[RMDB]
RNA sequence: GGGAACGACUCGAGUAGAGUCGAAAAGCAUUAAGUAAGAGUACUUAACCCUCUUUUUGCAGCCAUGCAGGUUGGGGACUAUCAUUAUAAUCAGUGUCGAUUAUAAUGUUCAACAUUGAUUAGCAGCAAUGCCCUUUGCUUUCGAGCAAAGGGCAUUAAAAGAAACAACAACAACAAC
Reactivity to DMS in 0.01 (KOAc 150mM, MgCl2 10mM, bicine 150mM(pH8.5), 24C), signal-to-noise 1, nucleotides 027 to 126: g010c200a100u000u000a050a050g000u030a050a170g020a170g050u010a050c060u000u000a050a030c040c010c040u010c050u000u000u000u000u000g000c040a020g030c050c050a110u000g020c060a040g010g020u000u030g010g010g010g050a090c190u000a020u010c040a030u000u000a010u000a010a020u000c000a190g020u010g000u020c220g010a010u000u010a010u010a010a020u000g010u020u010c110a030a050c080a070u000u000g010a070u000u000a030g010c100a050g000c110